[RMDB]
RNA sequence: GGGAACGACUCGAGUAGAGUCGAAAAGAUGCGUUCGCGCAUCCGCAAGCGUACUACAAGGGCUCGAAACUCGCGAUAAGACUCUCCCAAAUAGGAGAGUCUUUUGACGCGAGUGCGAGAACUACCCUUGUAUCGCACCUGCCACAUUCGUGUGGAACCACGAUCAUAGUUUCGACUAUGAUCGUGGAAAAGAAACAACAACAACAAC
Reactivity to DMS in 0.01 (KOAc 150mM, MgCl2 10mM, bicine 150mM(pH8.5), 24C), signal-to-noise 2, nucleotides 027 to 156: g000a000u010g020c000g030u000u000c290g030c020g030c010a000u000c010c010g020c100a080a070g030c020g030u010a060c080u000a010c020a050a030g000g010g080c000u010c010g010a100a110a010c000u000c000g010c000g010a150u000a000a030g000a020c000u000c010u000c010c000c010a080a170a260u020a040g000g020a020g000a000g020u010c000u000u000u010u020g000a230c030g030c000g020a020g020u010g000c020g010a120g000a060a080c020u010a300c000c010c000u000u020g000u000a000u000c100g030c010a040c020c020u000g030c010c010a040c030a170u000u010c300g020u000g010u010g000g010a220a240
Reactivity to 2A3 in 0.01 (KOAc 150mM, MgCl2 10mM, bicine 150mM(pH8.5), 24C), signal-to-noise 3, nucleotides 027 to 156: g000a000u000g010c000g030u060u130c240g020c000g010c160a000u000c010c040g060c030a080a050g000c000g020u120a080c060u000a000c030a000a000g000g000g010c000u000c010g010a140a110a000c000u000c000g000c000g030a090u030a040a000g000a000c000u010c010u050c000c020c040a090a150a090u290a050g000g000a000g000a000g000u000c100u000u010u020u050g090a060c000g000c000g000a000g000u000g000c030g000a000g000a040a010c070u200a110c000c010c000u000u010g000u000a000u050c000g010c000a050c000c040u080g040c010c000a010c000a020u070u210c230g120u060g010u050g000g000a030a050